[RMDB]
RNA sequence: GGGAACGACUCGAGUAGAGUCGAAAAAGAGCGAUUCGACAUCAUCCUACUGAUAGCGUUGAUGGUUCAAUGCCUGUUGUGGCUAGUUGGUUUACACGCACAGCAACAGGGCUGGGAUAAGCAUUUUCAGGCCAAUACCAUUGGGCAUCGAACGGUACGUUACAAGAUACUUCGGUAUCUUGUAACGAAAAGAAACAACAACAACAAC
Reactivity to DMS in 0.01 (KOAc 150mM, MgCl2 10mM, bicine 150mM(pH8.5), 24C), signal-to-noise 2, nucleotides 027 to 156: a020g010a180g010c060g000a160u000u000c000g050a110c010a070u000c040a080u000c040c020u020a270c070u000g020a140u000a100g000c090g000u010u010g000a020u000g010g000u000u000c030a050a060u000g000c020c000u000g000u000u010g030u010g010g000c010u000a070g010u000u000g010g000u000u010u020a140c070a110c070g000c030a140c020a050g020c030a070a080c080a130g000g030g050c010u010g010g020g020a080u010a100a110g030c070a220u010u000u000u000c110a120g000g050c000c060a040a050u000a020c000c000a160u000u010g000g000g000c000a050u000c050g040a080a030c020g010g010u010a140
Reactivity to 2A3 in 0.01 (KOAc 150mM, MgCl2 10mM, bicine 150mM(pH8.5), 24C), signal-to-noise 3, nucleotides 027 to 156: a000g110a020g030c080g060a100u060u050c040g050a120c060a050u070c010a010u000c020c010u090a150c150u170g070a180u150a120g060c050g030u010u040g010a030u030g040g030u030u010c000a050a000u020g000c000c000u040g020u140u140g010u030g080g000c130u060a120g050u020u030g070g050u070u140u130a060c120a010c050g030c010a040c010a060g040c020a030a080c040a100g030g070g000c020u020g000g010g060a120u110a240a030g090c070a040u070u060u100u140c110a060g100g000c020c040a040a060u060a120c020c000a000u050u160g010g010g000c000a020u010c030g050a020a030c020g020g020u070a010
The data come from the RNA Mapping Database (RMDB), library OK3TST. Structure probing data (DMS and 2A3) for a 207-nucleotide construct. The reactions ran in a buffer of 150 mM KOAc, 10 mM MgCl2 and 150 mM bicine (pH 8.5), at 24 C. 2A3 adducts were read by reverse transcription with SuperScript II with manganese.